[RMDB]
RNA sequence: GGGAACGACUCGAGUAGAGUCGAAAAGAUAUGGAAUCUAAGUCGCAUUGGAGGUCGGAAACGACUACCCACCCAAUGAACUACGACGAAGAUUCCUAAGUCAAACGGUUAUGUUCGCAUAACCGAACAACCCACACUUGUUCGCAAGUGUGGGUUGAAAAGAAACAACAACAACAAC
Reactivity to DMS in 0.01 (KOAc 150mM, MgCl2 10mM, bicine 150mM(pH8.5), 24C), signal-to-noise 1, nucleotides 027 to 126: g020a160u010a300u000g000g030a020a010u000c000u040a080a300g030u000c000g040c000a000u000u010g040g000a090g040g000u010c000g000g000a040a170a210c000g000a000c060u000a070c090c000c070a300c210c050c000a030a000u030g000a100a110c150u000a200c120g000a000c000g000a290a000g040a070u000u020c000c000u010a000a060g000u010c030a190a130a150c000g000g000u000u000a000u000g020u000u000c190g040c040a000u000a000a000c000c000g000a080a120
Reactivity to 2A3 in 0.01 (KOAc 150mM, MgCl2 10mM, bicine 150mM(pH8.5), 24C), signal-to-noise 1, nucleotides 027 to 126: g000a010u220a070u090g000g000a010a000u000c000u050a090a040g000u000c000g060c040a000u020u000g040g040a050g000g000u000c050g020g030a080a060a090c020g000a000c040u050a060c050c030c000a040c020c020c000a040a030u000g010a040a150c160u230a080c300g000a000c000g000a010a020g010a000u010u040c000c000u000a060a000g110u030c050a190a040a040c020g000g000u020u000a000u000g050u010u120c300g050c080a010u000a020a000c000c000g020a020a010

Source information
Structure probing data (DMS and 2A3) for a 177-nucleotide construct. For 2A3 the reverse transcriptase was SuperScript II with manganese. For 2A3, 1,324 sequencing reads were counted. For DMS, 568 sequencing reads were counted.